[RMDB]
RNA sequence: GGGAACGACUCGAGUAGAGUCGAAAAGGAACACCAAAGAGAAUACGUCCGUGGUUAUUCCGGCACAAGUAGCCGUCUCGCCAUCGCAGUCCACUACUCCCCCUGCGGUCAUGCUCGGCAUCGCACAAAACAGGUAAGAAUUCGUUCUUACCUGUUUAAAAGAAACAACAACAACAAC
Reactivity to 2A3 in 0.01 (KOAc 150mM, MgCl2 10mM, bicine 150mM(pH8.5), 24C), signal-to-noise 4, nucleotides 027 to 126: g020g000a040a030c040a030c040c030a020a170a010g090a030g030a120a070u110a140c080g060u030c050c030g030u060g020g040u070u060a080u170u040c060c010g030g020c030a020c020a170a050g030u120a020g070c020c010g030u020c010u020c030g040c010c000a030u040c040g010c050a010g030u030c030c010a060c060u170a070c040u050c020c000c010c000c010u020g000c010g010g000u030c000a020u080g020c010u000c030g020g000c000a010u030c020g000c030a010c020a070
Reactivity to DMS in 0.01 (KOAc 150mM, MgCl2 10mM, bicine 150mM(pH8.5), 24C), signal-to-noise 9, nucleotides 027 to 126: g010g020a080a070c140a150c030c040a050a110a110g010a110g010a120a100u010a070c140g010u000c040c090g020u000g010g000u000u010a140u000u010c060c020g010g020c070a060c110a080a080g010u000a090g010c030c030g000u000c030u000c070g010c030c040a060u000c060g010c060a060g000u010c030c040a060c050u000a090c070u000c010c010c010c040c030u000g010c030g010g010u000c070a050u000g010c040u000c060g000g010c080a030u000c050g010c080a080c180a050